Conditions: 150 mM KOAc, 10 mM MgCl2 and 150 mM bicine (pH 8.5), 24 C. Chemical mapping of a 177-nucleotide RNA with DMS and 2A3.
RNA sequence: GGGAACGACUCGAGUAGAGUCGAAAAGAUAUGGACCCGUGAGACAUGAAAUGGGAUUCGGAAACGAAUCCAAUUUCAACAGCUCACCCGUCCUAAGUCAAAAGUCUUCAACUUCGGUUGAAGACAAGAAUCACUAAGAGUUCGCUCUUAGUGAUUCAAAAGAAACAACAACAACAAC
Reactivity to DMS in 0.01 (KOAc 150mM, MgCl2 10mM, bicine 150mM(pH8.5), 24C), signal-to-noise 4, nucleotides 027 to 126: g010a020u000a090u010g000g000a010c000c020c280g000u000g000a010g000a010c040a300u000g010a000a000a010u000g010g010g000a010u000u000c000g020g010a030a010a040c000g010a000a000u000c000c000a030a000u000u000u000c000a080a050c180a120g010c010u000c000a000c000c010c150g000u000c000c000u000a010a080g000u000c010a100a090a110a130g000u000c000u000u000c000a010a010c000u000u020c200g020g000u010u000g000a010a010g000a000c000a020a040
Reactivity to 2A3 in 0.01 (KOAc 150mM, MgCl2 10mM, bicine 150mM(pH8.5), 24C), signal-to-noise 3, nucleotides 027 to 126: g010a010u020a010u040g000g000a000c000c010c020g000u020g000a010g000a030c280a300u300g010a020a010a000u050g070g000g000a000u000u010c010g010g000a000a020a000c000g000a000a010u000c000c000a010a000u010u000u010c010a040a020c050a030g010c000u000c010a000c020c010c010g000u000c000c000u010a040a000g020u000c020a040a020a000a230g000u000c010u010u000c000a010a010c010u060u100c290g170g000u000u000g000a000a000g000a000c000a000a000
Record summary:
DMS adducts were read by reverse transcription with MarathonRT. 2A3 adducts were read by reverse transcription with SuperScript II with manganese.